[RMDB]
RNA sequence: GGGAACGACUCGAGUAGAGUCGAAAAGAUAUGGAUCGUGUACCCACUGACGAAGUACUUCGGAAACGAAGUAUCGAAGUGGUACCGAUCCUAAGUCAAAAGACGUUGACCUUCGGGUCAACGUCAAGUAUGCACAGCGGUUCGCCGCUGUGCAUACAAAAGAAACAACAACAACAAC
Reactivity to DMS in 0.01 (KOAc 150mM, MgCl2 10mM, bicine 150mM(pH8.5), 24C), signal-to-noise 2, nucleotides 027 to 126: g010a050u000a300u000g010g000a000u010c000g010u020g040u000a010c150c020c160a170c170u000g030a190c230g020a150a130g000u010a000c000u010u000c000g020g010a060a040a190c000g000a020a000g040u000a000u000c010g020a300a040g010u000g000g050u000a000c000c010g010a000u000c000c000u000a000a050g000u000c030a140a120a130a050g000a000c000g020u030u000g000a040c000c000u000u020c300g040g000g030u000c000a000a000c000g020u000c000a070a040
Reactivity to 2A3 in 0.01 (KOAc 150mM, MgCl2 10mM, bicine 150mM(pH8.5), 24C), signal-to-noise 2, nucleotides 027 to 126: g030a010u070a010u090g030g020a010u020c040g050u080g010u300a030c070c150c000a060c170u140g100a170c040g020a140a040g170u040a000c020u010u030c000g040g010a050a030a030c040g020a000a000g030u010a000u050c010g010a130a010g030u070g030g000u000a010c030c000g000a000u030c000c010u000a010a030g040u000c020a020a000a110a200g010a000c020g000u000u000g030a010c020c000u030u140c300g060g100g000u000c000a010a000c000g000u000c000a000a000